This 177-nucleotide RNA was probed chemically with 2A3 and DMS.
[RMDB]
RNA sequence: GGGAACGACUCGAGUAGAGUCGAAAAUUUACGGGCCCGGGAGGAGGACCGAAUACACGCGCGCGAGGUCCUCCUGGUAGUACGAACGCGCGCGUGAAUAAUAGUACUACCACCCGGGCCCACCGAAACCUGUAUACAGGUUCGCCUGUAUACAGGUAAAAGAAACAACAACAACAAC
Reactivity to 2A3 in 0.01 (KOAc 150mM, MgCl2 10mM, bicine 150mM(pH8.5), 24C), signal-to-noise 1, nucleotides 027 to 126: u040u030u090a080c030g000g000g020c030c010c010g010g010g000a050g040g000a010g020g000a010c000c040g050a090a070u250a070c080a010c020g010c010g000c000g020c010g050a040g010g010u010c000c000u000c000c000u000g010g010u000a000g000u000a000c030g030a160a010c040g010c000g000c000g000c000g030u020g020a000a030u210a080a030u060a040g000u000a010c010u010a000c010c000a010c010c010c000g030g000g000c000c010c000a010c000c000g000a060a010
Reactivity to DMS in 0.01 (KOAc 150mM, MgCl2 10mM, bicine 150mM(pH8.5), 24C), signal-to-noise 2, nucleotides 027 to 126: u010u020u010a170c080g020g040g030c000c010c000g030g000g010a090g000g020a020g000g020a000c000c000g000a100a120u020a090c070a120c020g010c000g000c010g000c020g010a080g020g000u000c010c000u010c010c040u000g000g000u010a000g000u000a010c000g000a150a100c050g000c010g000c000g030c000g020u000g010a070a050u020a110a110u000a140g010u010a020c010u000a020c000c000a300c010c010c000g010g000g000c000c000c010a000c010c010g010a090a110

Source: RMDB library M2PK90, as collected in RNAgym. For DMS, 1,783 sequencing reads were counted. The reactions ran in a buffer of 150 mM KOAc, 10 mM MgCl2 and 150 mM bicine (pH 8.5), at 24 C.